[RMDB]
RNA sequence: GGGAACGACUCGAGUAGAGUCGAAAAGCAACGCGUCCACCCACGGCCGGACCACCUCGGCGCUGCCAGGGGCGAUGUUGGUGAAGACGGUGGCCUCCGGUUCGGUCGAGAUGCCUGGACGGCCGGCUACUAAUACGACCUUCGGGUCGUAUUAGUAAAAAGAAACAACAACAACAAC
Reactivity to DMS in 0.01 (KOAc 150mM, MgCl2 10mM, bicine 150mM(pH8.5), 24C), signal-to-noise 3, nucleotides 027 to 126: g010c080a060a070c080g010c060g000u000c050c060a170c030c010c020a160c040g000g010c000c000g010g000a120c030c010a100c100c020u000c030g010g020c020g000c120u010g000c000c010a090g020g000g000g000c020g000a300u030g000u000u010g000g030u010g000a190a160g000a040c000g010g010u020g000g020c010c000u000c010c050g000g020u000u000c110g010g020u000c010g000a080g020a190u010g000c100c090u030g000g010a300c000g010g000c030c030g010g000c090
Reactivity to 2A3 in 0.01 (KOAc 150mM, MgCl2 10mM, bicine 150mM(pH8.5), 24C), signal-to-noise 2, nucleotides 027 to 126: g040c050a070a130c120g020c020g130u010c030c040a070c020c030c000a040c020g010g030c010c000g060g020a160c010c000a010c010c000u010c020g060g000c180g080c170u060g010c000c010a040g000g010g010g020c010g030a040u060g020u070u060g100g170u300g150a110a060g050a010c020g000g060u060g120g000c000c000u030c030c010g000g000u000u040c020g010g020u000c000g010a000g000a040u140g090c050c060u010g010g010a020c000g000g000c030c010g000g000c000